[RMDB]
RNA sequence: GGGAACGACUCGAGUAGAGUCGAAAAGAGGUGUGCGAGAGGCCCUUCCUCGGCCCCAAAGCCGUCUGCCGGGCUAAGGCGUGCAGAGCAGGCGAGGACAGCCGCCGCCCCUACCGCCGCAGAGUCCACUACGAGUUUCGUUCGCGAAACUCGUAGUAAAAGAAACAACAACAACAAC
Reactivity to DMS in 0.01 (KOAc 150mM, MgCl2 10mM, bicine 150mM(pH8.5), 24C), signal-to-noise 1, nucleotides 027 to 126: g060a010g000g030u020g040u000g070c020g010a120g010a050g030g000c070c040c080u010u020c030c020u000c040g020g010c040c010c070c110a020a200a120g000c020c000g000u020c020u000g040c090c120g020g000g010c050u010a130a030g000g000c000g000u000g010c010a050g010a290g040c120a070g000g010c050g000a090g000g000a080c300a200g000c040c010g030c020c020g000c060c000c010c050u000a080c050c010g000c070c050g030c060a120g000a090g010u000c030c040